[RMDB]
An RNA of 207 nucleotides, treated with 2A3 and DMS and read out base by base. 2A3 is a SHAPE reagent: it acylates the 2'-hydroxyl of flexible nucleotides of all four kinds. Source: RMDB library ARCHII, as collected in RNAgym.
RNA sequence: GGGAACGACUCGAGUAGAGUCGAAAAGGGGUUGACUGGAUUUGACGGCGAGAUGAAAUGGUACGUAAGCACGCGGAGGCUUCUUUGGUUCCCUCCAUAAUCUGAGUCAAGGAAAAUUUAAUUGGCAACAAUGAGUAUGCUCUCGCUGCCUAAUCGACUUAUAGGAUAUGUUCGCAUAUCCUAUAAGAAAAGAAACAACAACAACAAC
Reactivity to 2A3 in 0.01 (KOAc 150mM, MgCl2 10mM, bicine 150mM(pH8.5), 24C), signal-to-noise 4, nucleotides 027 to 156: g040g010g010g010u040u040g060a100c060u130g100g080a100u070u050u140g040a020c010g010g030c020g010a020g010a050u090g040a070a080a050u150g010g030u060a010c000g020u030a010a050g010c000a010c090g050c060g020g010a010g020g000c020u030u030c000u100u090u040g080g000u070u060c010c010c000u000c000c000a030u050a060a020u020c030u040g010a010g040u000c020a020a030g110g010a070a030a010a050u090u110u080a090a090u060u000g020g020c010a030a000c000a070a060u050g000a010g030u060a020u110g020c000u000c000u000c010g000c000u000g000c000c010u030a030a010u030c010g040a040
Reactivity to DMS in 0.01 (KOAc 150mM, MgCl2 10mM, bicine 150mM(pH8.5), 24C), signal-to-noise 4, nucleotides 027 to 156: g000g010g030g020u000u010g000a100c040u000g020g000a140u000u000u010g010a080c060g010g030c030g000a060g010a090u000g000a090a080a090u000g020g040u000a050c030g010u010a120a120g030c020a050c050g010c120g030g010a080g020g010c030u010u000c040u000u000u010g030g020u000u000c020c010c000u000c030c030a100u010a030a060u000c030u000g010a190g020u010c040a060a100g020g000a040a050a060a130u000u000u000a070a160u000u010g020g000c030a030a060c060a080a090u000g000a050g010u000a060u020g020c060u000c010u010c030g020c000u010g000c010c020u000a070a130u000c020g010a200